Description:
The record gives the reactivity of an RNA of 207 nucleotides to DMS and 2A3. For 2A3 the reverse transcriptase was SuperScript II with manganese. High 2A3 reactivity points to a flexible backbone, as in loops and unpaired stretches. Conditions: 150 mM KOAc, 10 mM MgCl2 and 150 mM bicine (pH 8.5), 24 C. Reactivities are given for positions 27 through 156.
RNA sequence: GGGAACGACUCGAGUAGAGUCGAAAACUGCAGGUCAACGGAUCAUCUUCAGAUCAGCUAUUGCAGAAGAAAGGUCAGCCAAGCGCUCUGGGCCUGAUCGACUGUAUAUAGGAGCUUCUGAUUUCAACCAGAAGCUAACUCUCUCCGAAACAAUGAGGGUAUAAGGUAAGUUCGCUUACCUUAUACCAAAAGAAACAACAACAACAAC
Reactivity to DMS in 0.01 (KOAc 150mM, MgCl2 10mM, bicine 150mM(pH8.5), 24C), signal-to-noise 4, nucleotides 027 to 156: c060u000g000c040a080g010g010u000c030a080a070c050g000g020a070u000c010a130u000c100u010u000c100a160g020a080u000c030a140g010c000u000a100u010u010g020c010a070g000a050a270g010a040a100a060g040g020u000c000a100g030c000c020a100a180g020c120g020c040u000c060u010g050g020g010c020c010u000g000a100u000c040g010a200c020u010g010u010a060u000a100u000a110g030g000a080g010c020u000u000c000u010g010a050u010u010u000c110a090a050c040c000a040g010a040a020g010c010u000a010a050c040u000c040u000c010u000c020c030g000a180a080a090c050a070a110u000g000a160g010
Reactivity to 2A3 in 0.01 (KOAc 150mM, MgCl2 10mM, bicine 150mM(pH8.5), 24C), signal-to-noise 8, nucleotides 027 to 156: c020u040g000c050a030g010g050u090c040a090a070c090g100g020a040u030c020a020u020c060u160u070c050a030g020a160u020c050a020g060c010u020a030u070u060g000c000a000g000a040a000g030a030a060a000g010g000u020c020a000g020c020c010a190a040g050c080g020c120u050c080u110g060g000g020c010c020u070g010a180u030c010g020a020c010u020g030u030a050u010a010u030a220g080g020a020g020c000u010u000c000u000g070a130u070u240u280c060a060a040c020c010a010g000a000a000g000c000u000a020a010c000u000c000u010c010u010c030c030g090a070a070a060c080a070a110u160g020a050g090